[RMDB]
RNA sequence: GGGAACGACUCGAGUAGAGUCGAAAAUCGCAGCGCUUCGAGCACCACAAACACCACCAGACGACCCUUCAUCGUCAACCGCCCAGCCGAGCGGAAGCGUCGAAGAACAAGCACGCAAGAAACAGGACCUAAAAUCAUGGUUCGCCAUGAUUUUAGGAAAAGAAACAACAACAACAAC
Reactivity to DMS in 0.01 (KOAc 150mM, MgCl2 10mM, bicine 150mM(pH8.5), 24C), signal-to-noise 5, nucleotides 027 to 126: u020c040g040c060a090g000c090g020c020u000u000c070g000a130g040c050a060c070c020a020c110a100a090a100c070a060c030c050a090c030c050a060g000a050c030g000a070c060c020c060u000u010c060a100u020c050g030u000c030a080a090c080c020g000c010c010c040a080g030c060c040g000a090g000c010g000g000a060a090g000c040g000u000c030g010a060a090g010a080a070c130a060a100g040c050a060c070g010c000a060a070g020a080a090a060c050a050g000g000a260
Reactivity to 2A3 in 0.01 (KOAc 150mM, MgCl2 10mM, bicine 150mM(pH8.5), 24C), signal-to-noise 7, nucleotides 027 to 126: u090c030g010c050a020g020c020g010c030u030u050c060g060a030g030c030a030c020c000a030c030a020a160a000c050a030c020c000a000c010c010a020g010a040c020g050a070c040c000c000u040u080c020a080u020c010g070u030c020a040a050c020c010g010c000c010c010a020g020c020c020g020a010g000c000g010g040a050a020g010c010g060u060c060g040a080a050g040a070a030c030a080a030g030c040a010c060g020c020a050a030g040a100a090a010c060a040g020g100a040